This 177-nucleotide RNA was probed chemically with 2A3. High 2A3 reactivity points to a flexible backbone, as in loops and unpaired stretches.
RNA sequence: GGGAACGACUCGAGUAGAGUCGAAAAGGCACAAAGCCGGAUCCUGGGCCAGGAGGCUAGGGAAGAUUUCCUUGUCUACAGCGAAGGACGAUUGCACUCAGGCCCGCUGCAAUCGCUUAUUGCCCACGUAUGCCGCUCCAUUCGUGGAGCGGCAUACAAAAGAAACAACAACAACAAC
Reactivity to 2A3 in 0.01 (KOAc 150mM, MgCl2 10mM, bicine 150mM(pH8.5), 24C), signal-to-noise 1, nucleotides 027 to 126: g010g000c060a030c130a090a040a020g000c010c020g000g000a030u030c030c030u000g000g000g000c010c010a120g040g090a000g020g100c080u060a060g000g040g000a000a170g060a280u000u100u000c010c010u000u000g000u000c000u000a100c110a030g010c040g100a100a050g020g010a020c000g060a050u040u110g040c010a010c090u090c080a050g050g000c130c050c000g000c000u000g000c000a000a060u060c000g000c130u110u090a130u170u070g020c000c000c000a010c000
Record summary
2A3 adducts were read by reverse transcription with SuperScript II with manganese. Values cover nucleotides 27 to 126.